[RMDB]
RNA sequence: GGGAACGACUCGAGUAGAGUCGAAAACAAGGGCCGCAAGUCGCGCAUCGUCGCCAUGAGCAGCAGCCUGGGCCGCGCCGCCCGCGCUUACCGCACCCAGUUCGCGCCCGGCGGCCCCGAGCACGACCAGUCCAGUACUGUUCGCAGUACUGGACUGAAAAGAAACAACAACAACAAC
Reactivity to DMS in 0.01 (KOAc 150mM, MgCl2 10mM, bicine 150mM(pH8.5), 24C), signal-to-noise 2, nucleotides 027 to 126: c080a140a050g030g000g030c030c030g010c000a110a100g000u010c050g000c010g000c150a060u010c110g010u000c030g020c030c010a130u010g000a120g050c050a080g010c150a070g020c110c050u000g020g020g030c070c100g000c050g010c090c120g010c000c000c020g010c160g000c060u010u000a110c060c070g000c050a170c020c040c030a150g010u000u000c100g020c010g010c030c060c130g010g010c020g000g000c010c000c010c010g000a070g020c070a050c020g010a260c110
Reactivity to 2A3 in 0.01 (KOAc 150mM, MgCl2 10mM, bicine 150mM(pH8.5), 24C), signal-to-noise 1, nucleotides 027 to 126: c020a050a080g000g020g000c000c020g030c030a050a010g070u140c040g000c020g020c070a120u130c010g130u080c040g020c070c030a100u100g060a060g060c080a020g000c000a010g000c000c030u050g010g030g000c000c040g070c030g010c060c030g000c000c000c010g050c020g000c010u060u050a070c000c060g010c060a100c030c000c000a010g050u060u070c020g020c010g000c040c000c010g000g000c030g010g000c000c000c010c030g020a000g020c050a000c090g050a020c030

An RNA of 177 nucleotides, treated with DMS and 2A3 and read out base by base. The 2A3 profile rests on 1,500 reads. The RNA was probed in 150 mM KOAc, 10 mM MgCl2 and 150 mM bicine (pH 8.5) at 24 C.